This 177-nucleotide RNA was probed chemically with DMS and 2A3. Conditions: 150 mM KOAc, 10 mM MgCl2 and 150 mM bicine (pH 8.5), 24 C. For 2A3, 1,803 sequencing reads were counted.

[RMDB]
RNA sequence: GGGAACGACUCGAGUAGAGUCGAAAAAUGGUCUCGCCGUGCGGAUCGCAUACAGCAACGCGCGUGCGCAAGGCGAGAUGCGCCUGGGCGACGCAUGGCGCGUGAAGCCGAGCGACGCGUUGCUCGAUGCGUCCUGACGAUUCGUCGUCAGGACGCAAAAAGAAACAACAACAACAAC
Reactivity to DMS in 0.01 (KOAc 150mM, MgCl2 10mM, bicine 150mM(pH8.5), 24C), signal-to-noise 2, nucleotides 027 to 126: a070u010g010g000u000c000u000c070g080c040c080g020u010g010c050g030g000a100u000c010g030c100a090u000a120c120a110g010c100a030a050c070g010c020g020c170g050u000g010c030g000c010a080a130g000g020c010g000a140g010a040u000g010c010g000c000c000u010g020g030g030c080g000a040c080g040c040a090u050g010g020c030g000c000g020u000g010a200a300g010c090c000g000a300g000c000g020a140c020g000c000g010u000u000g000c000u010c040g000a100
Reactivity to 2A3 in 0.01 (KOAc 150mM, MgCl2 10mM, bicine 150mM(pH8.5), 24C), signal-to-noise 2, nucleotides 027 to 126: a000u100g030g000u000c040u050c080g080c050c040g070u080g080c030g000g110a120u080c080g000c010a050u140a220c040a060g050c020a020a000c010g000c020g020c060g080u100g080c000g030c010a020a020g030g040c040g010a070g020a040u040g010c020g000c000c010u050g010g050g060c110g010a060c070g060c140a070u150g030g000c000g000c000g000u020g070a060a000g030c000c000g010a000g000c010g020a050c000g000c010g000u020u010g040c000u000c010g030a040